[RMDB]
This 177-nucleotide RNA was probed chemically with DMS and 2A3. It was measured as part of the RMDB library RFMREP. The RNA was probed in 150 mM KOAc, 10 mM MgCl2 and 150 mM bicine (pH 8.5) at 24 C.
RNA sequence: GGGAACGACUCGAGUAGAGUCGAAAACUGGAGAGACCUAUAAGUAGCAACAUCUUUGUAUUGACACCAAGAUGUGCUCUAGGCGCCGAAGGGGCAAGAAGAGUAAAACAACUCCUCCAAUCUCUCACUAGGGAUAUUACUUCGGUAAUAUCCCUAGAAAAGAAACAACAACAACAAC
Reactivity to DMS in 0.01 (KOAc 150mM, MgCl2 10mM, bicine 150mM(pH8.5), 24C), signal-to-noise 2, nucleotides 027 to 126: c110u040g020g030a040g030a030g020a040c030c020u010a070u010a280a100g030u030a060g020c030a100a070c010a020u000c010u010u000u000g000u000a300u030u020g020a180c180a000c030c110a020a020g000a020u000g020u000g010c000u000c050u000a040g000g010c210g010c020c010g000a110a030g020g010g020g000c030a150a150g020a020a030g020a030g000u010a020a110a120a130c190a060a040c030u000c030c020u000c010c060a060a070u000c010u000c000u010c030a200
Reactivity to 2A3 in 0.01 (KOAc 150mM, MgCl2 10mM, bicine 150mM(pH8.5), 24C), signal-to-noise 2, nucleotides 027 to 126: c040u050g020g000a020g000a000g010a030c020c020u030a040u020a300a070g190u200a010g040c020a020a170c000a050u000c000u040u010u040g010u010a150u110u300g170a060c050a000c180c000a010a000g010a010u000g010u010g020c000u000c000u000a010g020g010c040g000c050c020g060a140a070g160g080g030g030c040a030a010g030a040a000g010a040g020u060a000a240a100a020c020a030a020c000u000c000c000u000c000c010a050a140u020c020u020c000u000c010a030